[RMDB]
RNA sequence: GGGAACGACUCGAGUAGAGUCGAAAAUGAUUCAUUGUUUGCUGGCCUUAGUAGCUCAUGCCUACAAUCCCAGUGCUUUGGGAGGCUACAGUUGGAGAAUUGCUUGAGUCCAGGAGUUCAAGGUUACAGUGAGCCAUGAUCAUGCCACUGAGCUCCAGUCCUGGAUAAUUUUCGAAUUAUCCAGGACAAAAGAAACAACAACAACAAC
Reactivity to DMS in 0.01 (KOAc 150mM, MgCl2 10mM, bicine 150mM(pH8.5), 24C), signal-to-noise 1, nucleotides 027 to 156: u000g000a100u000u000c070a100u000u000g010u000u000u000g000c040u000g020g020c000c000u010u000a140g000u010a040g040c020u010c060a130u010g040c170c010u020a070c040a120a170u000c010c000c000a090g010u010g000c080u010u000u000g000g010g000a110g030g000c060u000a050c070a070g010u000u010g050g020a180g010a060a080u010u000g000c020u010u000g010a160g020u000c040c020a090g000g020a030g010u000u000c030a070a010g000g030u010u000a070c030a080g050u000g010a040g010c020c050a100u000g070a120u020c050a030u000g000c030c010a090c070u020g020a060g000c010u000c010c050a300
Reactivity to 2A3 in 0.01 (KOAc 150mM, MgCl2 10mM, bicine 150mM(pH8.5), 24C), signal-to-noise 4, nucleotides 027 to 156: u070g000a050u160u070c010a000u040u020g050u040u020u020g020c000u030g030g030c000c010u070u030a090g060u120a020g070c010u030c040a030u110g010c010c010u080a060c060a060a090u050c000c000c000a050g030u140g160c080u180u180u050g030g020g000a010g030g000c020u020a050c040a100g080u110u090g020g010a080g040a180a140u180u100g080c070u070u060g030a040g060u040c000c030a050g020g030a010g000u010u030c020a020a000g010g020u060u110a100c010a000g020u020g040a000g000c010c000a000u000g000a010u030c020a020u040g050c000c020a160c140u140g030a020g070c010u050c060c060a010